[RMDB]
RNA sequence: GGGAACGACUCGAGUAGAGUCGAAAAAGUAAAUCCUGUGUGCUAAUUGAGGUGCAUUGGUCUGCAAAUCGAGUUGCUAGGCAAUAAACACAUUUGGAUUAAUUUUAAUCGUUCGUUGAGCGAUUAGCCCCUCAAGCAUUUUCGAAUGCUUGAGGGGAAAAGAAACAACAACAACAAC
Reactivity to 2A3 in 0.01 (KOAc 150mM, MgCl2 10mM, bicine 150mM(pH8.5), 24C), signal-to-noise 2, nucleotides 027 to 126: a010g230u180a050a020a010u000c000c000u000g000u020g000u000g000c040u050a130a100u060u050g070a060g000g070u040g110c010a060u060u080g100g000u140c090u090g010c040a080a060a000u060c020g020a040g190u040u020g030c040u080a020g000g130c010a000a010u030a090a120a030c020a000c000a030u180u170u170g000g000a010u060u060a030a030u090u110u050u070a000a000u010c000g000u030u000c090g130u120u270g020a010g030c000g010a000u020u000a020g000
This 177-nucleotide RNA was probed chemically with 2A3.
The data come from the RNA Mapping Database (RMDB), library OK2TST.